The record gives the reactivity of an RNA of 177 nucleotides to 2A3 and DMS. Reactivities are given for positions 27 through 126. 2A3 adducts were read by reverse transcription with SuperScript II with manganese.

RNA sequence: GGGAACGACUCGAGUAGAGUCGAAAACAACGACCACGACACAGAGCCGGUGGCUGUGCUUUUUGGAGGGUCUUCUGAUGGUAGUUUGGCGCUUCUGCAUAGUGAUGUGGAUGUAGAUUUGAGGGGGGCUACCUCUGAUCUUCGGAUCAGAGGUAGCAAAAGAAACAACAACAACAAC
Reactivity to 2A3 in 0.01 (KOAc 150mM, MgCl2 10mM, bicine 150mM(pH8.5), 24C), signal-to-noise 3, nucleotides 027 to 126: c050a010a020c020g140a040c000c030a090c050g040a010c020a020c040a040g040a010g060c030c000g050g040u020g020g000c000u000g030u080g040c060u080u100u070u080u090g090g000a050g040g000g000u030c000u030u010c000u030g180a170u150g060g060u030a080g020u000u050u070g020g000c060g010c070u040u040c010u000g010c040a080u040a030g070u060g130a120u060g040u050g040g000a020u050g100u080a050g060a150u140u100u130g030a060g020g010g010g000g000
Reactivity to DMS in 0.01 (KOAc 150mM, MgCl2 10mM, bicine 150mM(pH8.5), 24C), signal-to-noise 1, nucleotides 027 to 126: c170a130a120c100g020a100c000c030a020c030g000a080c120a000c050a000g010a100g000c010c090g000g060u000g030g000c090u010g040u010g040c080u010u000u000u000u000g030g100a030g000g020g020u060c050u000u020c030u010g000a120u000g000g050u000a010g060u000u000u030g040g010c080g000c020u000u010c000u000g000c000a010u020a070g000u030g000a110u040g000u000g010g000a090u000g060u020a030g000a120u070u000u010g030a110g000g000g000g000g000